This 207-nucleotide RNA was probed chemically with DMS and 2A3. The DMS profile rests on 2,513 reads. For 2A3, 1,408 sequencing reads were counted. It was measured as part of the RMDB library RNAMAK.

[RMDB]
RNA sequence: GGGAACGACUCGAGUAGAGUCGAAAAGUCUAUUUCGAUAGACGUGUGGUCCUAAGUCUCGAAAUUCACAACACAGCGUUGAAAUAUGGUCGGAAACGACCAUAUGGAGCUGUGGUGUGUUAUUCGAGAUAUGGAAUUUCGUCCCCUUCGGGGGAAAAUGGCAUAUGUAGUUCGCUACAUAUGCCAUAAAAGAAACAACAACAACAAC
Reactivity to DMS in 0.01 (KOAc 150mM, MgCl2 10mM, bicine 150mM(pH8.5), 24C), signal-to-noise 1, nucleotides 027 to 156: g010u000c000u010a040u000u000u000c180g010a050u010a010g000a000c010g040u020g030u000g010g020u000c000c020u030a040a280g020u000c000u010c010g030a030a020a300u010u000c010a050c010a000a010c020a040c000a010g030c000g020u000u000g040a110a100a040u010a010u000g000g020u000c020g050g000a160a090a280c000g080a010c000c000a010u010a010u030g040g000a240g010c020u000g050u000g010g000u010g080u000g010u010u000a160u000u000c000g010a020g020a000u000a100u000g010g000a100a190u000u000u000c020g000u000c000c000c000c000u000u020c300g060g050g000g010g010a000a000a060
Reactivity to 2A3 in 0.01 (KOAc 150mM, MgCl2 10mM, bicine 150mM(pH8.5), 24C), signal-to-noise 2, nucleotides 027 to 156: g020u000c000u000a010u100u230u150c170g120a000u010a010g000a040c030g040u100g080u070g160g050u040c060c000u050a140a090g030u000c000u000c010g050a060a120a190u120u070c010a000c000a040a020c000a020c000a000g010c020g250u300u030g010a020a010a000u010a000u000g010g000u020c000g030g030a100a100a080c000g000a000c010c000a000u000a000u000g040g000a010g020c000u000g010u000g010g000u000g000u000g000u020u020a280u040u000c000g000a000g000a010u000a000u030g010g030a020a030u080u200u190c120g060u020c040c030c010c030u070u160c300g030g000g000g000g000a070a030a020